[RMDB]
RNA sequence: GGGAACGACUCGAGUAGAGUCGAAAAGUCUAGCGAUUUAGGGAUCCGAUCCGGGUUGCAGAACUCAACUGCAUGAGUAGACACGCAAGUCGCGUAUUGGCCGACCGCCCAAGGAUCUGCUAGACGACAUAGGUCACCCAUUCGUGGGUGACCUAUGAAAAGAAACAACAACAACAAC
Reactivity to 2A3 in 0.01 (KOAc 150mM, MgCl2 10mM, bicine 150mM(pH8.5), 24C), signal-to-noise 2, nucleotides 027 to 126: g000u000c000u000a000g010c020g040a060u080u070u070a080g000g030g020a030u000c040c000g020a000u020c020c010g000g100g060u000u000g000c000a000g000a050a010c020u040c080a100a070c110u260g090c090a090u060g000a020g040u090a040g050a080c080a010c190g040c070a080a040g300u050c030g010c050g020u080a040u070u050g000g020c020c020g060a120c050c100g100c060c000c010a020a030g050g020a000u020c010u050g000c000u010a000g000a000c020g000a000
Reactivity to DMS in 0.01 (KOAc 150mM, MgCl2 10mM, bicine 150mM(pH8.5), 24C), signal-to-noise 2, nucleotides 027 to 126: g030u000c000u000a000g050c020g010a050u000u000u000a290g000g000g000a080u000c020c020g020a060u000c030c020g000g000g000u010u010g000c010a050g000a120a070c050u000c070a060a090c070u000g030c250a180u000g010a010g010u000a070g000a140c300a070c140g010c000a010a050g000u000c050g010c210g000u000a030u000u020g020g020c300c170g000a080c130c220g000c020c000c020a070a160g000g000a010u000c000u030g030c020u000a010g000a040c000g010a100
Source: RMDB library OK2TRN, as collected in RNAgym. Chemical mapping of a 177-nucleotide RNA with 2A3 and DMS. For DMS the reverse transcriptase was MarathonRT. Conditions: 150 mM KOAc, 10 mM MgCl2 and 150 mM bicine (pH 8.5), 24 C.